[RMDB]
Record summary
Conditions: 150 mM KOAc, 10 mM MgCl2 and 150 mM bicine (pH 8.5), 24 C. Chemical mapping of a 207-nucleotide RNA with 2A3 and DMS. Values cover nucleotides 27 to 156. For 2A3, 4,016 sequencing reads were counted. For 2A3 the reverse transcriptase was SuperScript II with manganese. The data come from the RNA Mapping Database (RMDB), library ARCHII.

RNA sequence: GGGAACGACUCGAGUAGAGUCGAAAACAGUGUAUGGACAGCUAUCUCUCGAGCACAGGUUUAGCAAUGGGAAAAUAAAAUGGAGCACCUAACAACGCAUCUUCACAGACCAAGAACUACGAGAUCGCCCCUUUCAUUCUGGGGUGACGGAGGGAUCCUACUCAACGAAGUUCGCUUCGUUGAGUAGAAAAGAAACAACAACAACAAC
Reactivity to 2A3 in 0.01 (KOAc 150mM, MgCl2 10mM, bicine 150mM(pH8.5), 24C), signal-to-noise 5, nucleotides 027 to 156: c030a020g020u010g030u090a060u100g030g050a030c020a040g010c040u050a090u090c040u000c010u020c070g050a020g000c010a020c040a060g000g050u020u060u150a030g000c070a080a090u120g000g000g080a020a050a040a090u190a030a070a030a050u120g040g000a020g020c020a020c030c020u060a090a050c060a030a010c030g020c050a050u020c020u070u040c040a050c030a070g060a030c020c020a060a020g040a060a030c020u090a040c090g010a020g030a130u040c000g020c000c010c010c000u010u150u080c110a210u140u080c060u080g000g000g020g010u010g010a010c020g010g010a030g000g000g020a010u010c010
Reactivity to DMS in 0.01 (KOAc 150mM, MgCl2 10mM, bicine 150mM(pH8.5), 24C), signal-to-noise 2, nucleotides 027 to 156: c030a110g080u000g030u000a060u000g000g000a070c050a130g040c030u000a090u000c000u010c010u010c050g020a070g070c040a090c070a100g020g010u000u000u000a060g040c000a080a100u000g000g000g000a100a030a070a040u000a020a030a060a070u010g010g000a080g030c030a090c060c020u000a010a080c070a070a110c090g020c040a070u000c040u000u000c050a100c040a030g010a100c050c010a050a070g010a070a090c020u000a070c040g020a120g000a210u000c010g020c000c010c000c000u000u000u000c130a180u000u000c080u000g010g000g050g000u000g000a030c060g010g000a070g040g000g000a140u000c070